[RMDB]
RNA sequence: GGGAACGACUCGAGUAGAGUCGAAAAAAAAGAUAUGGACCUUGAACUACGACUUGCGACUCGCAUCGAUCUCGAUUCGGAAACGAAUCGAGGGAGCGAGUCCAAGUCGCAAGGUCCUAAGUCAAAACCUAAAGGAAACGUUCGCGUUUCCUUUAGGAAAAGAAACAACAACAACAAC
Reactivity to DMS in 0.01 (KOAc 150mM, MgCl2 10mM, bicine 150mM(pH8.5), 24C), signal-to-noise 3, nucleotides 027 to 126: a090a070a090a040g000a020u010a300u010g010g000a030c000c010u000u010g000a130a120c200u030a300c040g010a020c000u000u000g020c250g000a010c010u000c010g020c020a300u000c250g000a040u000c000u000c000g000a000u000u020c000g000g010a040a050a090c010g030a020a010u000c000g010a010g000g000g000a000g040c000g000a010g000u000c000c000a010a000g000u000c000g000c000a000a000g010g000u000c000c000u010a000a070g000u010c000a050a100a130a180
Reactivity to 2A3 in 0.01 (KOAc 150mM, MgCl2 10mM, bicine 150mM(pH8.5), 24C), signal-to-noise 2, nucleotides 027 to 126: a000a020a040a100g050a020u090a030u060g040g000a000c000c010u000u000g020a100a090c120u160a060c300g010a000c010u030u030g090c190g070a000c000u000c010g000c030a260u300c120g080a070u000c010u000c020g000a000u000u000c020g010g000a000a080a060c000g000a010a020u000c000g000a010g010g000g010a010g050c000g000a010g000u010c000c000a010a010g000u000c010g010c000a000a000g000g010u000c000c000u010a030a000g030u000c030a030a030a150a200